Description:
The data come from the RNA Mapping Database (RMDB), library OK2TRN. Structure probing data (2A3 and DMS) for a 177-nucleotide construct. The RNA was probed in 150 mM KOAc, 10 mM MgCl2 and 150 mM bicine (pH 8.5) at 24 C.
RNA sequence: GGGAACGACUCGAGUAGAGUCGAAAAAGGCCUGCGCAGUGCACGACGUACAUGAUCGGCCACGGCCCUAUCUGGCGCUGUGGCCUGCGAGCGUACUAUCACGGCCGUAUGGUACAUCGCACGUAUGUGCAAGGAGUCAGUUCGCUGACUCCUUGCAAAAAGAAACAACAACAACAAC
Reactivity to 2A3 in 0.01 (KOAc 150mM, MgCl2 10mM, bicine 150mM(pH8.5), 24C), signal-to-noise 2, nucleotides 027 to 126: a020g100g040c020c020u070g000c050g060c070a020g050u030g000c040a000c110g070a010c000g000u050a010c020a100u130g040a110u200c070g030g000c060c030a020c000g010g000c000c020c000u180a280u280c220u090g010g000c110g000c070u000g000u000g010g000c000c010u000g000c000g010a020g000c060g010u010a000c010u020a000u140c070a030c100g170g000c070c000g000u020a020u060g000g000u000a000c000a020u000c010g050c000a050c070g050u120a100u220g100
Reactivity to DMS in 0.01 (KOAc 150mM, MgCl2 10mM, bicine 150mM(pH8.5), 24C), signal-to-noise 3, nucleotides 027 to 126: a100g010g010c040c010u000g000c080g020c060a080g010u020g010c060a080c030g000a070c060g000u010a050c090a160u000g000a110u000c160g020g000c000c000a010c030g000g010c010c020c000u010a080u010c210u010g010g030c200g010c010u010g030u000g000g010c000c000u010g000c000g000a060g020c140g010u000a030c020u000a060u000c110a090c080g000g020c120c050g020u000a030u000g000g010u000a020c010a090u010c010g000c010a070c110g010u000a050u000g000